[RMDB]
RNA sequence: GGGAACGACUCGAGUAGAGUCGAAAAGGCUAGUUUGCUAUCGGUACAGUAGUCUUUUGGCUACGCUCGAAAGAGGAUCUGCUCCAACUGUACCGAGGUAGCACGGAGCAGAAUUUUUAUAGCCGAAGGGAGGGAGCUACUUCGGUAGCUCUUUCCCAAAAGAAACAACAACAACAAC
Reactivity to DMS in 0.01 (KOAc 150mM, MgCl2 10mM, bicine 150mM(pH8.5), 24C), signal-to-noise 9, nucleotides 027 to 126: g000g020c010u000a030g000u020u030u020g010c010u010a080u000c000g000g010u000a000c010a040g000u000a030g010u000c010u020u030u030u040g000g000c010u010a010c130g010c020u000c000g000a100a120a130g010a030g010g000a100u010c000u000g000c000u000c000c000a160a110c090u010g000u000a000c000c000g010a030g010g020u020a030g010c060a080c210g000g010a020g000c000a010g010a040a010u010u020u030u040u040a130u000a030g010c000c000g000a120a110
Reactivity to 2A3 in 0.01 (KOAc 150mM, MgCl2 10mM, bicine 150mM(pH8.5), 24C), signal-to-noise 9, nucleotides 027 to 126: g020g010c020u030a050g120u110u190u170g050c060u110a060u100c010g000g000u010a010c000a010g030u060a020g040u040c020u030u210u120u210g000g000c000u050a040c090g030c040u020c010g050a070a050a020g030a020g030g030a070u010c010u030g010c000u010c000c010a070a100c040u020g000u000a000c000c000g010a030g010g060u080a020g020c050a040c110g000g000a000g000c000a000g000a000a010u030u040u020u050u100a150u030a010g000c010c010g010a110a070
The record gives the reactivity of an RNA of 177 nucleotides to DMS and 2A3. Values cover nucleotides 27 to 126. The RNA was probed in 150 mM KOAc, 10 mM MgCl2 and 150 mM bicine (pH 8.5) at 24 C.